[RMDB]
RNA sequence: GGGAACGACUCGAGUAGAGUCGAAAAUUGCCUUAAACUAAUGAGUAAGGAAAAUAACGAUCUGGGUGACGCCAGAUCCCACGAUCAGUUUUCGUGAAGAAUUUUUGACGGGACCAGAGGCUACCCGACGAUACAAAACAUUCGUGUUUUGUAUCGUAAAAGAAACAACAACAACAAC
Reactivity to DMS in 0.01 (KOAc 150mM, MgCl2 10mM, bicine 150mM(pH8.5), 24C), signal-to-noise 9, nucleotides 027 to 126: u010u010g010c010c000u000u000a040a070a070c120u030a130a130u020g010a140g020u000a060a040g010g000a080a060a060a080u030a100a140c160g000a010u000c000u000g000g010g010u020g000a180c300g000c050c040a040g000a020u000c000c090c010a030c050g000a020u010c190a130g010u010u010u000u000c000g000u010g010a110a120g020a040a040u010u010u000u000u000g000a050c020g000g000g000a050c050c070a170g010a030g000g010c030u000a160c010c000c020g010
Reactivity to 2A3 in 0.01 (KOAc 150mM, MgCl2 10mM, bicine 150mM(pH8.5), 24C), signal-to-noise 9, nucleotides 027 to 126: u070u060g050c020c000u080u060a130a140a060c070u100a130a110u190g090a060g110u080a050a070g090g050a070a070a030a080u160a090a050c070g010a010u000c000u000g000g000g030u050g060a040c050g050c050c000a010g000a010u000c010c000c000a050c030g020a040u060c070a120g080u070u060u040u050c100g050u060g050a050a080g030a100a110u040u060u040u090u130g040a030c000g000g020g030a010c000c030a040g010a020g070g010c020u010a030c000c000c000g000